Structure probing data (DMS and 2A3) for a 177-nucleotide construct. Reactivities are rounded to 0.1 and cut off at 0 and 3. For DMS, 6,215 sequencing reads were counted. It was measured as part of the RMDB library OK1LIB. The reactions ran in a buffer of 150 mM KOAc, 10 mM MgCl2 and 150 mM bicine (pH 8.5), at 24 C.
RNA sequence: GGGAACGACUCGAGUAGAGUCGAAAAAAAAGAUGAGGACAUCGAUCAGUUGCGUAAAGAGAAAGACAAGGAUGAUAAAUCAAUCUAUGAUAAGUUGAUUAAAGCUUAUAACGUCAAAUCGUUAACGGGAAUCUUACUAAUUCGUUAGUAAGAUUCCAAAAGAAACAACAACAACAAC
Reactivity to DMS in 0.01 (KOAc 150mM, MgCl2 10mM, bicine 150mM(pH8.5), 24C), signal-to-noise 4, nucleotides 027 to 126: a020a010a030a040g000a050u020g010a130g000g000a150c040a030u000c040g010a110u030c050a100g010u000u010g000c030g030u000a080a090a100g000a080g000a050a020a060g010a050c100a060a080g020g010a050u010g000a060u010a060a050a040u000c060a040a040u030c030u030a050u010g010a110u020a050a010g000u000u000g010a030u020u010a120a080a100g000c010u000u010a030u020a020a050c080g010u000c150a050a100a050u040c020g010u000u000a020a100c250g000
Reactivity to 2A3 in 0.01 (KOAc 150mM, MgCl2 10mM, bicine 150mM(pH8.5), 24C), signal-to-noise 4, nucleotides 027 to 126: a000a010a010a000g070a030u090g000a060g000g060a030c010a080u010c010g060a040u070c040a050g080u160u100g080c090g010u060a040a040a010g090a050g020a020a050a000g050a020c010a060a010g070g000a060u050g020a000u090a090a040a010u050c040a020a030u000c040u090a080u060g170a080u090a110a010g050u050u000g080a100u040u260a210a020a050g040c010u070u110a100u010a080a050c010g030u040c110a010a060a050u160c030g010u000u030a020a020c060g060